[RMDB]
RNA sequence: GGGAACGACUCGAGUAGAGUCGAAAAAAUUGUUGGAACGGAUAAUUAAACGAUGGAUGCAUUGGAUGUACGAUUGCAUAUGCUUCUGGUAAUGUACUACCAAUUUCAUGAUGAUCAGUUACAAUGAGCUAUUGUUAGGCUUCGGCCUAACAAUAGCAAAAGAAACAACAACAACAAC
Reactivity to DMS in 0.01 (KOAc 150mM, MgCl2 10mM, bicine 150mM(pH8.5), 24C), signal-to-noise 2, nucleotides 027 to 126: a000a030u010u020g020u020u010g010g010a080a010c070g010g000a050u010a040a060u000u030a100a080a070c160g000a110u000g020g000a090u020g020c190a080u010u000g010g010a220u010g000u010a010c010g010a020u020u000g030c020a090u010a080u010g000c170u000u020c080u000g010g020u000a020a020u000g020u000a030c070u010a300c010c010a030a040u010u000u010c020a120u010g010a060u000g000a010u000c060a090g010u000u000a040c040a000a070u000g020a080
Structure probing data (DMS) for a 177-nucleotide construct. The DMS profile rests on 919 reads. Conditions: 150 mM KOAc, 10 mM MgCl2 and 150 mM bicine (pH 8.5), 24 C. The data come from the RNA Mapping Database (RMDB), library OK2TST.